RNA sequence: GGGAACGACUCGAGUAGAGUCGAAAACUUGACCAGUCUUCUCGCCUAUUUGCGACGAAUACUGCGUCGUCAGGAUACACUUAUCGGCUAAAUAUGUCAGGAUUUGAACUCCUUGGCGGGUAGCAAACCAUGCUCCAACUUUCGAGUUGGAGCAUGGAAAAGAAACAACAACAACAAC
Reactivity to DMS in 0.01 (KOAc 150mM, MgCl2 10mM, bicine 150mM(pH8.5), 24C), signal-to-noise 1, nucleotides 027 to 126: c010u000u030g000a080c030c010a000g000u010c070u000u030c000u010c000g000c000c300u000a070u020u000u010g000c050g000a000c100g040a000a000u000a000c070u020g000c110g100u000c060g010u110c260a010g000g000a040u020a120c120a140c100u020u050a100u010c050g030g020c000u010a050a160a110u020a030u120g000u000c000a130g000g030a020u000u030u030g020a110a090c170u010c000c000u000u000g020g000c000g000g000g000u040a040g000c080a080a040a100
Reactivity to 2A3 in 0.01 (KOAc 150mM, MgCl2 10mM, bicine 150mM(pH8.5), 24C), signal-to-noise 2, nucleotides 027 to 126: c030u050u080g070a020c030c000a000g000u040c000u000u020c000u000c010g050c060c070u110a200u130u160u220g000c000g000a030c060g010a040a030u060a040c020u050g060c080g020u000c000g040u040c080a000g000g040a040u020a070c130a040c120u000u060a050u240c000g010g000c020u050a090a190a110u300a210u250g020u020c000a020g060g000a030u030u050u060g020a010a010c040u000c000c000u020u010g000g010c000g010g000g000u020a010g000c050a050a000a010